[RMDB]
RNA sequence: GGGAACGACUCGAGUAGAGUCGAAAACUACAACAACUGAGGCUAAACUGGUUGCGGCUGAGAACUCAUCCAUCACUUUUUCAAUGAGCAUUUCGUUGCUUUUGGACUGUAGUAACAUAGCUAUUCCACUGGAAGUUCGAUUCGUCGAACUUCCAGUAAAAGAAACAACAACAACAAC
Reactivity to 2A3 in 0.01 (KOAc 150mM, MgCl2 10mM, bicine 150mM(pH8.5), 24C), signal-to-noise 4, nucleotides 027 to 126: c010u090a030c020a140a000c020a060a000c040u150g040a040g090g000c050u080a100a070a000c080u040g040g000u030u040g000c030g030g010c020u050g060a020g070a150a010c000u000c040a050u010c020c020a080u050c060a070c070u110u090u070u100u100c050a120a110u120g030a010g040c000a030u010u170u170c070g090u110u070g000c010u040u010u020u060g020g000a020c040u070g010u020a030g010u000a180a020c070a120u090a010g010c000u060a070u110u010c010c010
Reactivity to DMS in 0.01 (KOAc 150mM, MgCl2 10mM, bicine 150mM(pH8.5), 24C), signal-to-noise 2, nucleotides 027 to 126: c040u010a010c170a070a100c090a020a060c150u010g000a100g010g010c010u000a070a130a170c040u050g020g000u020u010g000c200g060g000c000u010g000a160g000a070a060c030u000c010a070u000c030c050a060u020c060a070c090u010u010u000u000u010c110a040a000u020g000a040g060c070a050u000u010u020c060g020u010u000g030c030u030u020u020u010g020g000a060c250u000g020u030a050g000u000a110a080c120a040u030a090g040c050u000a060u030u000c050c060
Structure probing data (2A3 and DMS) for a 177-nucleotide construct. It was measured as part of the RMDB libraries RFM100 and RFMREP. Conditions: 150 mM KOAc, 10 mM MgCl2 and 150 mM bicine (pH 8.5), 24 C. DMS adducts were read by reverse transcription with MarathonRT.